[RMDB]
RNA sequence: GGGAACGACUCGAGUAGAGUCGAAAAGAUAUGGAUGGAGCACCAGGCUGUAAGCUGGUCGGAAACGACCAGUUGAGGCCCUGGUGCGUUGAAAUCCUAAGUCAAAAGAACAGGUUCGCCUGUUCAAGUUUAUACACAGGUUCGCCUGUGUAUAAACAAAAGAAACAACAACAACAAC
Reactivity to DMS in 0.01 (KOAc 150mM, MgCl2 10mM, bicine 150mM(pH8.5), 24C), signal-to-noise 6, nucleotides 027 to 126: g000a040u000a300u010g010g000a010u000g010g000a140g020c000a020c000c000a030g010g000c010u010g010u010a240a090g000c010u000g000g010u000c000g010g000a070a100a180c000g000a010c000c000a000g010u000u000g000a280g000g000c150c060c060u000g000g020u000g020c000g000u000u000g000a090a110a050u000c000c000u010a060a160g010u000c040a070a070a090a150g000a020a000c000a010g000g000u000u020c260g020c000c000u000g000u000u000c010a060a070
Reactivity to 2A3 in 0.01 (KOAc 150mM, MgCl2 10mM, bicine 150mM(pH8.5), 24C), signal-to-noise 3, nucleotides 027 to 126: g030a020u090a060u180g000g000a000u010g020g030a030g010c010a000c000c000a000g020g000c020u040g050u120a000a010g000c010u000g000g010u010c010g000g020a080a090a050c000g010a010c020c010a000g000u000u010g000a040g000g000c040c010c010u010g000g000u000g000c010g000u010u020g000a010a030a000u010c000c000u010a130a030g070u050c030a020a020a050a170g010a020a000c000a000g010g060u050u090c170g140c110c000u020g000u010u000c000a000a000
Source information
Source: RMDB library TTRDEL, as collected in RNAgym. This 177-nucleotide RNA was probed chemically with DMS and 2A3. The reactions ran in a buffer of 150 mM KOAc, 10 mM MgCl2 and 150 mM bicine (pH 8.5), at 24 C. DMS adducts were read by reverse transcription with MarathonRT. Reactivities are given for positions 27 through 126.